[RMDB]
RNA sequence: GGGAACGACUCGAGUAGAGUCGAAAAGAAUCGUAUAUCAUACGACAGUCCAUCAAAGUUUCUGACCUAUCAGGUUCCGACGGUUGGGUAUUGGCCAACCGUGCCUAUAACGGGUAACGGGGGAUUAAUACAACAAACCCUUCGGGGUUUGUUGUAUAAAAGAAACAACAACAACAAC
Reactivity to DMS in 0.01 (KOAc 150mM, MgCl2 10mM, bicine 150mM(pH8.5), 24C), signal-to-noise 1, nucleotides 027 to 126: g010a160a140u000c010g000u000a000u020a040u060c190a080u020a010c020g010a000c080a090g000u000c020c040a130u080c140a030a090a250g020u000u020u000c000u000g000a090c080c030u020a040u000c040a130g000g000u020u000c130c050g000a020c070g020g000u000u000g000g000g010u000a140u050u060g110g030c000c000a060a050c000c000g020u020g000c000c050u000a020u000a100a090c140g000g010g020u000a040a020c050g010g010g000g000g020a100u010u010a070
Reactivity to 2A3 in 0.01 (KOAc 150mM, MgCl2 10mM, bicine 150mM(pH8.5), 24C), signal-to-noise 2, nucleotides 027 to 126: g040a030a200u060c020g010u010a040u060a050u050c120a000u030a040c000g000a030c020a000g080u000c010c020a120u100c060a050a080a080g000u000u000u000c030u040g100a110c000c000u070a050u220c000a070g000g080u020u060c000c010g160a000c010g000g020u000u020g000g050g000u300a160u180u300g120g080c000c000a030a000c000c000g020u000g000c020c000u150a120u030a260a080c080g000g000g010u020a040a030c040g030g000g030g000g000a000u040u300a040
An RNA of 177 nucleotides, treated with DMS and 2A3 and read out base by base. For DMS the reverse transcriptase was MarathonRT. The 2A3 profile rests on 580 reads. The DMS profile rests on 1,467 reads.